[RMDB]
RNA sequence: GGGAACGACUCGAGUAGAGUCGAAAAAAACAACAACGACAAAAGAUCCAAUUAAAUACUGUCUACAGGAGACUCACUUUAAGUUUAAAGACACACAUAGGCUGAAUGUGAUAGGAUGAACAAAUGAUAAUCUAUGCAAAUGGCAACCAAAAGAGAACGGAAAAUCAUUAUUCGUAAUGAUUUUCCGAAAAGAAACAACAACAACAAC
Reactivity to 2A3 in 0.01 (KOAc 150mM, MgCl2 10mM, bicine 150mM(pH8.5), 24C), signal-to-noise 2, nucleotides 027 to 156: a000a030a010c120a040a000c040a030a000c060g160a010c090a070a080a030a040g010a040u080c050c040a020a080u200u110a110a070a050u110a080c050u030g010u040c020u030a040c040a090g000g020a020g020a060c010u060c040a050c000u050u090u080a090a000g020u000u010u130a110a090a020g070a000c010a000c000a010c030a110u040a060g030g000c000u010g040a140a060u090g060u000g070a070u090a060g060g020a030u030g020a080a000c020a060a100a050u070g020a010u050a070a020u060c040u060a020u070g020c010a030a090a060u060g020g010c000a030a050c020c020a010a110a000a060g110a010g100a060a030
Reactivity to DMS in 0.01 (KOAc 150mM, MgCl2 10mM, bicine 150mM(pH8.5), 24C), signal-to-noise 2, nucleotides 027 to 156: a050a060a030c060a090a070c020a070a140c040g010a100c030a050a030a070a040g000a130u000c040c030a100a140u000u000a030a060a100u000a080c110u000g020u020c020u010a140c030a080g000g020a120g010a060c060u000c000a020c030u000u010u010a050a090g000u000u000u000a020a080a040g000a090c070a090c060a030c100a130u010a050g020g040c040u010g000a120a030u000g010u000g010a110u000a140g010g000a080u000g010a110a130c100a050a060a040u000g000a140u000a040a100u000c030u000a110u000g020c030a010a030a050u000g000g010c070a050a120c000c000a030a030a060a100g000a130g000a090a170
Structure probing data (2A3 and DMS) for a 207-nucleotide construct. For DMS, 2,602 sequencing reads were counted. Conditions: 150 mM KOAc, 10 mM MgCl2 and 150 mM bicine (pH 8.5), 24 C. For 2A3 the reverse transcriptase was SuperScript II with manganese. Reactivities are given for positions 27 through 156.